Description
Structure probing data (DMS and 2A3) for a 177-nucleotide construct. The RNA was probed in 150 mM KOAc, 10 mM MgCl2 and 150 mM bicine (pH 8.5) at 24 C. Source: RMDB library OK1LIB, as collected in RNAgym. For DMS the reverse transcriptase was MarathonRT. 2A3 adducts were read by reverse transcription with SuperScript II with manganese. Values cover nucleotides 27 to 126.
RNA sequence: GGGAACGACUCGAGUAGAGUCGAAAAGAAAGAAGAAAAACCGUGUGAACUAUGAUGGCUUUACAAACCUCGACGAAAAGAAACACUUGAUUCUACCGAAAGCAAGAGCUGCUGCAUACGGAAGAAACACCGGUGCCAUAUUCGUAUGGCACCGGUGAAAAGAAACAACAACAACAAC
Reactivity to DMS in 0.01 (KOAc 150mM, MgCl2 10mM, bicine 150mM(pH8.5), 24C), signal-to-noise 1, nucleotides 027 to 126: g020a080a060a030g010a020a090g000a100a080a020a130a040c000c010g000u000g030u000g000a040a040c130u020a130u040g000a020u000g000g000c020u080u140u030a130c040a000a050a280c060c010u000c120g050a110c140g000a080a040a070a050g000a120a140a090c120a050c190u000u040g000a040u050u000c000u000a090c150c070g000a000a000a180g010c190a000a060g000a050g000c000u000g000c000u000g000c000a000u000a070c050g000g000a070a050g020a080a000a080
Reactivity to 2A3 in 0.01 (KOAc 150mM, MgCl2 10mM, bicine 150mM(pH8.5), 24C), signal-to-noise 1, nucleotides 027 to 126: g110a000a030a000g110a110a080g100a010a060a010a000a000c000c000g000u000g000u000g040a070a000c080u010a040u240g070a030u090g020g060c000u000u000u160a030c150a000a080a040c000c040u050c100g040a050c000g000a000a060a000a010g080a090a060a000c080a000c110u050u120g070a070u070u020c000u020a100c020c050g100a040a040a000g070c050a090a090g000a000g070c030u060g080c000u030g000c000a030u080a030c060g020g010a100a000g020a000a030a000